The data come from the RNA Mapping Database (RMDB), library M2RFPK.
Chemical mapping of a 207-nucleotide RNA with 2A3.
For 2A3, 834 sequencing reads were counted.
RNA sequence: GGGAACGACUCGAGUAGAGUCGAAAACUCGCUGUGUUUGUGGCUGGCUUUCAGCGGGCUGGAGGAGCCGGGAGCGGAGGCGGAGGACCGAGCCAAAAACGUCAGCCGAGGCCGGGCGGCCCCGCUCAAAAUCUUCGUAUCUUCGGAUACGAAGAAACGCCAUAUACAACUUCGGUUGUAUAUGGCGAAAAGAAACAACAACAACAAC
Reactivity to 2A3 in 0.01 (KOAc 150mM, MgCl2 10mM, bicine 150mM(pH8.5), 24C), signal-to-noise 1, nucleotides 027 to 156: c000u020c020g000c050u030g000u010g000u070u130u090g060u050g050g010c020u010g030g000c000u080u170u120c030a050g000c040g010g030g000c030u050g000g070a000g010g060a040g040c060c000g020g140g000a010g000c000g000g120a150g030g030c060g020g040a030g050g030a030c040c000g000a020g000c010c010a030a140a070a000a000c080g100u100c040a000g000c020c010g000a020g000g000c000c000g040g030g010c030g030g020c000c020c000c050g070c010u020c000a110a160a060a060u020c000u010u010c000g000u000a000u000c000u030u040c080g060g010a000u000a010c000g000a000a000g000a000a000a000
Conditions: 150 mM KOAc, 10 mM MgCl2 and 150 mM bicine (pH 8.5), 24 C.